[RMDB]
RNA sequence: GGGAACGACUCGAGUAGAGUCGAAAAGACAAAUGAAAGCAGCAGGGACUUUGGUAGGUAUCUGGACAUAAACACUAUUACAACACAGGUUAAUGCAAGAAAAAGCCUUUAAACAUCAUGGAAAUUAAACAGUCACUGUGAGAAUUUUCCUUUUGUGACCGAGAAUACAUUUCGAUGUAUUCUCGGUAAAAGAAACAACAACAACAAC
Reactivity to DMS in 0.01 (KOAc 150mM, MgCl2 10mM, bicine 150mM(pH8.5), 24C), signal-to-noise 2, nucleotides 027 to 156: g020a110c050a060a120a090u020g000a080a070a130g030c050a090g000c090a110g010g000g040a040c020u020u000u000g010g020u000a040g020g020u010a120u010c020u020g000g000a130c130a090u000a050a020a020c040a010c000u000a060u010u000a040c040a030a060c030a050c170a050g020g030u020u000a050a110u020g000c000a010a100g000a030a010a070a040a070g030c020c000u010u010u000a040a040a030c030a030u010c300a060u010g020g010a020a040a090u000u010a070a060a140c060a140g020u000c060a020c100u000g050u020g010a050g010a100a120u000u000u020u000c020c010u000u000u000u000g030u010g010
Reactivity to 2A3 in 0.01 (KOAc 150mM, MgCl2 10mM, bicine 150mM(pH8.5), 24C), signal-to-noise 3, nucleotides 027 to 156: g040a010c040a000a110a080u140g060a130a050a050g020c060a000g000c010a020g070g040g000a020c020u010u000u040g010g010u010a020g040g000u030a090u080c030u040g010g000a030c010a040u080a030a070a010c040a000c030u030a030u060u040a020c030a050a000c010a010c030a040g020g000u070u110a090a020u190g000c070a090a110g060a050a050a020a000a000g030c020c020u100u110u050a090a090a020c020a030u150c010a020u070g010g060a040a000a060u090u090a160a140a010c010a010g060u080c040a010c070u030g010u010g010a020g010a020a020u020u020u010u070c000c000u030u070u060u100g110u060g040
Description
An RNA of 207 nucleotides, treated with DMS and 2A3 and read out base by base. For DMS, 2,519 sequencing reads were counted. As a SHAPE reagent, 2A3 marks flexible, mostly unpaired nucleotides at the ribose 2'-OH. For 2A3 the reverse transcriptase was SuperScript II with manganese. The RNA was probed in 150 mM KOAc, 10 mM MgCl2 and 150 mM bicine (pH 8.5) at 24 C. For 2A3, 1,574 sequencing reads were counted.